An RNA of 177 nucleotides, treated with 2A3 and read out base by base.
2A3 adducts were read by reverse transcription with SuperScript II with manganese.
As a SHAPE reagent, 2A3 marks flexible, mostly unpaired nucleotides at the ribose 2'-OH.
Conditions: 150 mM KOAc, 10 mM MgCl2 and 150 mM bicine (pH 8.5), 24 C.
Values cover nucleotides 27 to 126.

RNA sequence: GGGAACGACUCGAGUAGAGUCGAAAAUGAAACCGAUAAUAGCAAAGAGCAUGAAUGGUACAAGCCAAGCUAAAUCGAUAUCUGCUAAAGGUAACAUCAUAAACCAUUUCAAAAUAACACCGUGUAACGCUGGACAAGUGUUCGCACUUGUCCAGCGAAAAGAAACAACAACAACAAC
Reactivity to 2A3 in 0.01 (KOAc 150mM, MgCl2 10mM, bicine 150mM(pH8.5), 24C), signal-to-noise 1, nucleotides 027 to 126: u010g000a020a000a000c000c000g080a050u160a300a150u050a030g000c080a000a000a000g000a050g000c000a000u130g000a000a040u150g000g000u070a040c000a080a130g010c000c040a000a000g000c000u060a050a050a050u120c010g000a000u000a000u000c050u100g060c000u110a040a040a030g070g050u000a100a100c000a040u000c000a110u190a260a120a000c000c030a050u020u280u200c110a000a090a160a000u230a000a030c090a040c000c050g050u050g000u040a000a000